The record gives the reactivity of an RNA of 177 nucleotides to DMS.
RNA sequence: GGGAACGACUCGAGUAGAGUCGAAAAUCAGAGUUACUUAUAAGGAAUAUAAAUAAAGUUCAACCUGUGGCAAAUUUGCACUUUCUCCUUGAACUAUGUUGCUCUCAAAGAAAAAGGUUUGAAAGGAUUUUUCCACUCUAUUCGUAGAGUGGAAAAAAAAAGAAACAACAACAACAAC
Reactivity to DMS in 0.01 (KOAc 150mM, MgCl2 10mM, bicine 150mM(pH8.5), 24C), signal-to-noise 1, nucleotides 027 to 126: u050c030a010g000a210g040u020u010a000c050u000u020a100u000a120a130g000g000a130a130u040a130u100a090a050a210u010a050a020a130g000u020u010c040a050a110c150c020u000g000u000g000g040c050a070a210a040u000u010u000g000c060a130c030u000u000u000c050u000c000c010u000u000g000a070a130c160u010a040u000g000u000u010g000c100u000c040u000c080a030a080a210g010a000a120a110a040a100g000g000u000u080u000g000a090a030a050g000g000a050

Source information
Reactivities are given for positions 27 through 126. Conditions: 150 mM KOAc, 10 mM MgCl2 and 150 mM bicine (pH 8.5), 24 C. For DMS, 947 sequencing reads were counted.